The data come from the RNA Mapping Database (RMDB), library M2PK90. The record gives the reactivity of an RNA of 177 nucleotides to 2A3 and DMS.
[RMDB]
RNA sequence: GGGAACGACUCGAGUAGAGUCGAAAAACUUUGGCCGACGCUGCUAGGCGGGUGCGCACUGCUGUCUGGCCCGGCCCCGCGCUAGGGCGCACGUUUCGCUCUGCGGAGGGUAACCGGGCUGAAAUAACAUAUACUAUUUCUUCGGAAAUAGUAUAUGAAAAGAAACAACAACAACAAC
Reactivity to 2A3 in 0.01 (KOAc 150mM, MgCl2 10mM, bicine 150mM(pH8.5), 24C), signal-to-noise 4, nucleotides 027 to 126: a000c030u120u050u090g050g000c010c010g020a030c030g030c060u080g010c070u070a080g070g000c030g000g000g040u110g020c050g000c020a040c050u080g030c020u040g040u130c080u100g020g000c010c000c010g000g010c010c000c010c000g020c000g000c070u200a020g000g010g000c000g020c000a070c080g080u130u270u220c010g000c000u000c000u020g000c000g010g050a200g050g000g000u010a030a030c000c000g000g000g000c000u010g000a000a020a000u080a020a010
Reactivity to DMS in 0.01 (KOAc 150mM, MgCl2 10mM, bicine 150mM(pH8.5), 24C), signal-to-noise 9, nucleotides 027 to 126: a090c060u010u000u010g010g010c020c010g010a080c080g010c040u000g010c090u010a090g010g010c040g010g000g020u000g010c050g010c050a070c060u000g010c040u000g010u010c080u010g010g010c000c010c010g010g000c060c000c000c020g000c010g010c010u010a020g010g000g010c000g020c120a070c220g000u000u010u010c000g010c000u000c010u000g010c000g010g000a170g020g000g000u000a100a150c010c010g010g000g020c000u000g000a020a040a070u010a090a200
Reactivities are rounded to 0.1 and cut off at 0 and 3. Reactivities are given for positions 27 through 126. 2A3 adducts were read by reverse transcription with SuperScript II with manganese. The reactions ran in a buffer of 150 mM KOAc, 10 mM MgCl2 and 150 mM bicine (pH 8.5), at 24 C.